[RMDB]
RNA sequence: GGGAACGACUCGAGUAGAGUCGAAAAUACUCGCCUUUAAUCAAGAUGGUAUUAUUUUUAAUGCUGCUGAUUGUAUGAGCGAUUUUAUGAGUGAGAUUAAGUGUAAAACACAAUCUAUAGCACCAUCUACUGGUGUUUAUGAAUUAAACGGUUACACACCGUAUUUCCCAUUCGUGGGAAAUACGGUAAAAGAAACAACAACAACAAC
Reactivity to 2A3 in 0.01 (KOAc 150mM, MgCl2 10mM, bicine 150mM(pH8.5), 24C), signal-to-noise 3, nucleotides 027 to 156: u090a010c020u000c040g000c000c000u030u060u050a030a050u000c050a120a190g040a280u070g040g020u050a010u010u020a100u060u200u050u200u120a010a000u000g000c000u000g010c000u000g010a030u020u010g090u150a100u050g050a050g060c010g000a000u020u070u060u140a220u150g080a040g090u050g030a050g000a070u200u050a060a070g020u010g020u030a040a090a030a020c030a020c020a060a020u000c020u030a050u070a080g050c000a000c000c000a010u100c110u240a100c140u050g000g000u010g000u020u090u010a030u010g010a000a000u070u080a150a080a060c070g050g010u050u050a010c020a000c000
Reactivity to DMS in 0.01 (KOAc 150mM, MgCl2 10mM, bicine 150mM(pH8.5), 24C), signal-to-noise 1, nucleotides 027 to 156: u010a090c170u000c010g010c010c010u000u060u010a080a090u000c040a010a070g000a130u000g030g030u000a020u000u000a080u000u000u000u000u000a070a040u000g010c000u010g030c020u010g010a010u020u010g030u000a030u000g010a210g060c050g000a050u000u020u010u020a100u000g010a110g000u000g000a120g000a120u020u000a020a070g050u000g010u000a000a010a030a130c060a050c300a000a050u000c010u000a070u000a050g000c010a000c020c000a060u000c140u010a120c230u000g060g030u010g030u000u000u020a030u000g000a090a050u000u000a030a060a100c080g000g010u000u000a020c030a030c050